[RMDB]
RNA sequence: GGGAACGACUCGAGUAGAGUCGAAAAAAAGAUAUGGAUUCUGACGAGCGACGAUCUGUGGUGAAAUCCGUAUAUCGGAAACGAUAUACGAACUGCCACAGGGAGCUCGGAGGAAUCCUAAGUCAAACAAUGUCCUUUAGUUCGCUAAAGGACAUUGAAAAGAAACAACAACAACAAC
Reactivity to DMS in 0.01 (KOAc 150mM, MgCl2 10mM, bicine 150mM(pH8.5), 24C), signal-to-noise 4, nucleotides 027 to 126: a060a060a080g000a000u000a010u000g000g000a010u000u000c000u000g010a300c010g010a010g010c000g000a070c300g000a010u010c000u000g000u000g000g030u000g000a090a120a080u000c050c000g010u000a000u000a000u000c000g010g000a020a000a010c000g010a010u000a000u000a010c000g000a020a020c170u010g010c010c000a010c000a020g000g010g010a010g030c010u000c020g010g000a300g000g000a020a010u000c000c000u000a000a060g010u000c000a090a100a150
Reactivity to 2A3 in 0.01 (KOAc 150mM, MgCl2 10mM, bicine 150mM(pH8.5), 24C), signal-to-noise 3, nucleotides 027 to 126: a010a000a000g020a020u030a020u030g000g000a010u000u020c010u030g020a040c000g000a000g010c010g300a300c010g000a110u000c010u000g010u020g030g000u060g180a280a150a110u060c030c010g000u000a010u010a000u000c000g000g000a000a000a000c000g000a000u000a000u000a000c000g000a010a010c070u100g000c000c000a000c000a000g020g000g000a000g000c010u000c000g010g000a010g000g000a000a000u010c000c000u000a000a000g000u000c000a000a000a010
The record gives the reactivity of an RNA of 177 nucleotides to DMS and 2A3. It was measured as part of the RMDB library TTRDES.